An RNA of 177 nucleotides, treated with 2A3 and DMS and read out base by base. The DMS profile rests on 2,848 reads. High 2A3 reactivity points to a flexible backbone, as in loops and unpaired stretches. It was measured as part of the RMDB library OK2TST. The reactions ran in a buffer of 150 mM KOAc, 10 mM MgCl2 and 150 mM bicine (pH 8.5), at 24 C.
RNA sequence: GGGAACGACUCGAGUAGAGUCGAAAAAGAACCUGACUGACUACGGUGCAUUCGUUGACCUGGGUGGCGUUGAUGGCUUGCUGCACAUCACUGACAUGGCUUGGAAACGUGUUAAACACCCAAGCGACAGCUAGCUAGCAUUCGUGCUAGCUAGCUGAAAAGAAACAACAACAACAAC
Reactivity to 2A3 in 0.01 (KOAc 150mM, MgCl2 10mM, bicine 150mM(pH8.5), 24C), signal-to-noise 2, nucleotides 027 to 126: a020g030a000a080c010c010u000g080a060c020u040g020a020c010u060a010c070g120g050u080g040c020a060u010u070c030g070u070u040g110a160c010c010u030g010g060g000u000g010g020c040g020u050u090g000a060u040g010g030c050u030u150g020c060u090g000c070a040c010a150u020c020a020c050u030g010a010c000a080u060g060g000c010u040u020g030g000a060a140a050c050g010u010g040u100u140a020a170a010c010a010c030c010c020a000a000g030c040g070a040
Reactivity to DMS in 0.01 (KOAc 150mM, MgCl2 10mM, bicine 150mM(pH8.5), 24C), signal-to-noise 3, nucleotides 027 to 126: a040g000a110a120c030c020u000g010a130c100u020g000a090c070u000a080c090g000g010u010g000c060a100u000u000c060g020u000u010g010a120c050c040u000g000g000g020u000g000g010c100g010u000u010g020a100u000g000g010c040u000u010g000c100u010g000c020a070c050a060u000c050a050c090u010g000a070c070a030u000g020g000c010u000u000g010g000a080a110a120c130g000u000g020u000u020a040a050a170c040a050c040c010c000a030a040g010c040g000a150